Structure probing data (2A3 and DMS) for a 177-nucleotide construct.

RNA sequence: GGGAACGACUCGAGUAGAGUCGAAAACCCAGCAGAUGUCUGGGAUUGGUAGCCAGGGCCUGGAGCCGGAUGCCGAGAAGGAGGCCUGCAACUCAUUUCCCCAUUAGACGUUCUGAGAACACGUGCAAAGAGUCAAUCAUUUCGAUGAUUGACUCUUAAAAGAAACAACAACAACAAC
Reactivity to 2A3 in 0.01 (KOAc 150mM, MgCl2 10mM, bicine 150mM(pH8.5), 24C), signal-to-noise 5, nucleotides 027 to 126: c000c000c000a000g030c020a020g030a120u130g030u050c010u030g010g000g070a100u030u090g090g040u080a010g020c040c010a050g040g010g000c020c010u110g080g010a040g050c020c010g000g020a100u160g110c040c000g050a050g070a140a050g090g040a020g000g030c000c000u020g000c010a030a050c010u000c040a030u050u050u010c020c000c030c000a060u100u150a050g010a030c030g040u070u040c040u070g060a040g010a100a020c130a010c140g050u140g040c020a070
Reactivity to DMS in 0.01 (KOAc 150mM, MgCl2 10mM, bicine 150mM(pH8.5), 24C), signal-to-noise 4, nucleotides 027 to 126: c000c000c010a160g030c000a110g010a090u010g000u000c000u000g000g010g020a070u000u000g000g030u030a040g020c050c080a160g000g010g000c010c010u010g000g000a160g010c030c030g000g000a080u000g010c050c010g000a080g020a150a100g010g010a110g000g000c010c010u000g010c180a090a160c040u010c020a080u000u020u000c020c000c000c290a110u010u020a040g000a030c050g000u010u010c030u000g000a140g000a100a130c140a050c090g020u000g000c110a090
The reactions ran in a buffer of 150 mM KOAc, 10 mM MgCl2 and 150 mM bicine (pH 8.5), at 24 C.